This 177-nucleotide RNA was probed chemically with 2A3. The reactions ran in a buffer of 150 mM KOAc, 10 mM MgCl2 and 150 mM bicine (pH 8.5), at 24 C. Values cover nucleotides 27 to 126.
[RMDB]
RNA sequence: GGGAACGACUCGAGUAGAGUCGAAAAUCAUUUGGAAUUAAUCCUGAGAUUGCUAUGCAAAUCUGACUCCCCCUUGAUGAAAUCCUACAAUGCAGACAGAACAGGUCGGGGAUGCCUCGCAUCAGUCCGGACCCGUUCGGUUCGCCGAACGGGUCCGAAAAGAAACAACAACAACAAC
Reactivity to 2A3 in 0.01 (KOAc 150mM, MgCl2 10mM, bicine 150mM(pH8.5), 24C), signal-to-noise 1, nucleotides 027 to 126: u060c030a030u080u140u230g060g040a020a070u230u000a130a000u150c030c000u000g000a000g000a000u000u130g050c180u250a040u270g000c000a040a040a060u000c000u010g040a070c020u040c000c000c000c000c010u070u020g010a000u070g030a020a000a120u000c000c000u010a050c080a070a030u110g050c000a000g010a080c030a150g020a080a010c020a000g050g050u080c030g000g000g050g000a010u000g000c000c000u130c030g070c000a000u000c000a030g110u000c040